[RMDB]
RNA sequence: GGGAACGACUCGAGUAGAGUCGAAAAUCUCGUGCGCAGUUACGGCUCGCACGGAUGACCUGCAAAAAGUGGUCAGCUUAUUUAUCCUGCUACGGCAAAUACAUUACGGGGUCUGUAAAAGUCAGAGUAGUGAAAUAUCGAAAAAGACAAGACAGCAGACGCAUCCUGCCUUCGGGCAGGAUGCGUCAAAAGAAACAACAACAACAAC
Reactivity to 2A3 in 0.01 (KOAc 150mM, MgCl2 10mM, bicine 150mM(pH8.5), 24C), signal-to-noise 1, nucleotides 027 to 156: u000c060u010c050g000u000g000c000g050c100a010g000u020u030a100c160g100g010c000u000c000g000c030a000c000g000g000a030u050g010a000c000c030u000g040c090a000a190a000a000a000g150u090g020g070u030c050a030g000c000u000u100a050u210u130u090a010u030c000c000u000g000c030u140a110c020g000g000c010a000a020a150u180a090c080a100u200u050a010c000g040g010g000g010u000c000u000g030u020a000a000a070a070g000u020c000a000g010a000g040u020a010g010u010g020a000a000a030u230a040u100c000g020a000a000a000a000a000g020a020c030a010a040g090a000c000a000g000c010a010